[RMDB]
RNA sequence: GGGAACGACUCGAGUAGAGUCGAAAAAUCCUCAGGUUCAUAAGCGUGAUGAUUGGGUGUUAAUGCUCCAUGCAUGACAUGUGCCUCCUUUGAACCUUGUUACGACCUUGGCACAUUACCCAUCUGAAAAAGACGUUCGCGUUCGCGCGAACGUCAAGUACUUACCACACUUCGGUGUGGUAAGUACAAAAGAAACAACAACAACAAC
Reactivity to DMS in 0.01 (KOAc 150mM, MgCl2 10mM, bicine 150mM(pH8.5), 24C), signal-to-noise 1, nucleotides 027 to 156: a110u010c010c000u000c050a070g030g010u000u000c010a030u000a060a070g020c130g040u020g020a120u010g010a040u010u000g020g010g070u000g000u000u000a050a110u000g020c000u020c140c210a160u000g020c030a030u000g010a090c130a250u000g010u000g000c010c000u010c110c010u000u000u020g000a040a050c000c010u010u040g050u010u010a170c160g000a180c080c080u000u010g010g040c000a030c010a060u000u000a130c010c020c010a090u000c060u010g000a060a070a070a200a130g000a030c000g020u000u000c020g020c030g060u000u000c290g030c010g050c030g020a000a000c000g060u010c000a000a060
Reactivity to 2A3 in 0.01 (KOAc 150mM, MgCl2 10mM, bicine 150mM(pH8.5), 24C), signal-to-noise 3, nucleotides 027 to 156: a000u010c010c000u040c010a000g000g010u010u010c020a020u030a290a070g020c040g100u120g070a050u070g000a030u110u180g010g000g000u060g010u090u100a220a040u030g010c010u120c240c130a100u210g010c000a000u000g010a020c010a040u010g000u000g000c010c000u070c000c010u020u000u000g000a000a000c000c000u010u130g030u060u120a100c080g100a130c070c110u060u080g000g000c000a000c000a000u010u130a000c020c000c000a000u000c040u080g080a080a070a030a010a010g000a000c000g000u000u000c000g000c010g000u020u040c260g000c030g000c000g070a000a000c000g020u000c000a000a000